[RMDB]
RNA sequence: GGGAACGACUCGAGUAGAGUCGAAAACAUCGCAUUGCUACCACCGGCGGCGCGGAUCAUGGCGUCCGCUGCGGUAUUUUGACCGGCAGCCAUCGGGGUUAAGCCGCCAUGACUCAUGACAAACAGCCACGUCCAGUACGUUCGCGUACUGGACGUGAAAAGAAACAACAACAACAAC
Reactivity to 2A3 in 0.01 (KOAc 150mM, MgCl2 10mM, bicine 150mM(pH8.5), 24C), signal-to-noise 2, nucleotides 027 to 126: c010a040u090c020g000c070a050u040u180g020c020u110a060c020c050a100c070c020g040g030c010g020g040c000g000c060g060g000a050u020c010a080u140g120g000c030g030u000c020c030g000c010u010g000c000g000g000u040a090u050u200u090u150g120a040c000c010g210g000c030a000g040c050c010a060u090c070g040g010g000g000u020u060a050a000g050c020c000g000c000c010a030u040g050a040c020u020c060a090u060g080a030c010a080a180a000c010a020g040c010
Reactivity to DMS in 0.01 (KOAc 150mM, MgCl2 10mM, bicine 150mM(pH8.5), 24C), signal-to-noise 2, nucleotides 027 to 126: c100a000u020c050g040c060a060u010u000g060c040u000a010c040c020a110c070c080g010g000c050g020g000c030g000c040g010g020a110u000c100a050u000g000g000c000g000u000c000c100g030c010u000g000c010g010g000u000a100u000u000u000u010g010a040c070c000g020g010c000a120g000c050c100a060u000c150g020g000g000g010u000u010a050a100g000c080c090g000c010c020a050u000g020a070c030u010c040a070u020g000a070c130a150a130a100c210a120g030c040